[RMDB]
An RNA of 207 nucleotides, treated with 2A3 and DMS and read out base by base. 2A3 is a SHAPE reagent: it acylates the 2'-hydroxyl of flexible nucleotides of all four kinds. For 2A3, 1,581 sequencing reads were counted. For DMS the reverse transcriptase was MarathonRT.
RNA sequence: GGGAACGACUCGAGUAGAGUCGAAAACUUGAGCUCAGGGCUUCUGGACUGCAGUGGACUAUGUUGAUCAGGUGUCCACACUAAGUUCGGUAUCGAUAUGGUGCUCCUGGGGGAGCUUGGGACCACCAGGUCGUGUUAUGAGGGGUGAACCGGCCCAGGUAACCUCUAUGUUCGCAUAGAGGUUACCAAAAGAAACAACAACAACAAC
Reactivity to 2A3 in 0.01 (KOAc 150mM, MgCl2 10mM, bicine 150mM(pH8.5), 24C), signal-to-noise 3, nucleotides 027 to 156: c010u040u150g020a000g010c010u020c060a060g000g040g040c000u070u020c020u050g010g010a010c000u040g030c080a030g010u010g020g010a010c010u080a080u150g120u150u210g190a210u180c070a040g100g080u050g010u120c010c000a010c010a010c050u120a070a000g010u020u000c010g010g030u110a060u130c030g020a020u000a020u150g020g000u020g000c020u030c000c020u020g010g000g000g020g020a060g170c020u060u050g020g000g020a010c020c000a010c000c010a030g000g020u000c030g000u010g040u170u180a090u190g040a070g000g020g030g010u060g040a030a010c040c020g020g020c020c030c000a020
Reactivity to DMS in 0.01 (KOAc 150mM, MgCl2 10mM, bicine 150mM(pH8.5), 24C), signal-to-noise 1, nucleotides 027 to 156: c040u000u010g020a060g000c000u000c050a060g010g020g010c050u010u000c040u010g050g040a070c020u000g020c140a210g000u000g020g000a060c010u000a090u000g010u020u010g000a160u010c080a050g020g020u000g050u000c020c000a010c030a130c100u000a110a020g010u000u000c000g040g000u000a130u010c080g000a060u000a030u020g030g000u000g000c100u000c020c010u000g000g010g040g050g010a150g020c070u000u000g010g030g000a070c070c000a010c040c000a090g040g080u000c010g000u000g000u000u000a100u010g010a220g050g020g000g040u010g000a100a050c070c010g000g020c000c020c000a150